[RMDB]
RNA sequence: GGGAACGACUCGAGUAGAGUCGAAAAUCGGCCAGGCCGUACGAUCUCAUGUCAGCGCCGAUCGCGCGAUCGAGGAUCGGAUCGUAGUACAGUGAUCCUGGCCGCGGAUCCGAGGCGCGUGCGCGGCACGAACGGAGCGGUUCGCCGCUCCGUUCGUAAAAGAAACAACAACAACAAC
Reactivity to 2A3 in 0.01 (KOAc 150mM, MgCl2 10mM, bicine 150mM(pH8.5), 24C), signal-to-noise 1, nucleotides 027 to 126: u100c000g000g010c040c040a100g060g090c000c020g040u020a010c040g020a040u030c040u000c050a090u190g080u010c050a030g030c040g000c050c050g040a040u090c060g020c020g020c060g040a080u110c080g070a050g080g030a050u040c050g040g010a030u060c030g040u020a090g080u090a110c120a070g070u030g160a070u050c010c000u000g010g000c000c000g000c010g060g010a010u070c030c030g010a010g010g000c040g000c000g040u060g080c070g000c000g000g000c010
Reactivity to DMS in 0.01 (KOAc 150mM, MgCl2 10mM, bicine 150mM(pH8.5), 24C), signal-to-noise 2, nucleotides 027 to 126: u000c020g020g000c040c050a060g000g060c150c040g000u000a040c030g000a050u000c010u010c100a100u000g030u000c070a120g000c050g040c050c080g010a070u010c060g010c080g000c110g000a030u000c060g000a130g040g000a040u000c060g010g000a040u000c020g020u010a060g000u010a120c080a110g010u000g010a100u010c050c000u000g000g020c000c000g020c050g020g000a050u020c000c060g020a090g010g010c010g000c010g020u000g000c060g020c040g010g000c030
This 177-nucleotide RNA was probed chemically with 2A3 and DMS. The RNA was probed in 150 mM KOAc, 10 mM MgCl2 and 150 mM bicine (pH 8.5) at 24 C. For 2A3, 1,674 sequencing reads were counted.